Source information:
Chemical mapping of a 177-nucleotide RNA with DMS and 2A3. Conditions: 150 mM KOAc, 10 mM MgCl2 and 150 mM bicine (pH 8.5), 24 C. Reactivities are given for positions 27 through 126. It was measured as part of the RMDB library OK2TST. The 2A3 profile rests on 9,887 reads.
RNA sequence: GGGAACGACUCGAGUAGAGUCGAAAAAAUUGCGACACAAUUAGCUCGUUGAAAAAGGACAUUAAGGAACAGACUAUACGAGCGAGUCGACUGCGAAAUCCACUUCAGCGCCCAGUGGUCAUCAAGACAUGAUGGAUUUAUUCGUAAAUCCAUCAUGAAAAGAAACAACAACAACAAC
Reactivity to DMS in 0.01 (KOAc 150mM, MgCl2 10mM, bicine 150mM(pH8.5), 24C), signal-to-noise 8, nucleotides 027 to 126: a060a050u000u000g020c030g020a080c070a190c110a080a070u010u000a130g020c030u000c010g030u010u010g000a040a050a100a140a080g000g010a100c060a110u010u010a090a120g010g000a080a070c080a160g000a060c060u000a090u000a020c020g010a040g020c020g010a070g000u000c030g010a080c090u000g010c090g000a050a060a080u010c020c020a040c070u000u000c080a090g010c080g010c010c010c040a070g020u000g010g000u010c140a080u000c080a070a080g010a270
Reactivity to 2A3 in 0.01 (KOAc 150mM, MgCl2 10mM, bicine 150mM(pH8.5), 24C), signal-to-noise 6, nucleotides 027 to 126: a000a010u140u120g020c030g030a010c020a000c010a090a180u110u060a030g000c010u000c030g020u000u040g090a080a060a010a030a030g050g010a020c050a060u170u220a110a080g100g000a080a040c010a040g050a030c030u030a020u010a120c000g000a010g020c010g010a000g000u010c010g020a100c040u060g010c030g030a050a030a050u020c000c000a020c010u090u100c050a030g030c010g000c040c000c000a020g020u020g020g030u020c010a060u080c040a080a040g080a060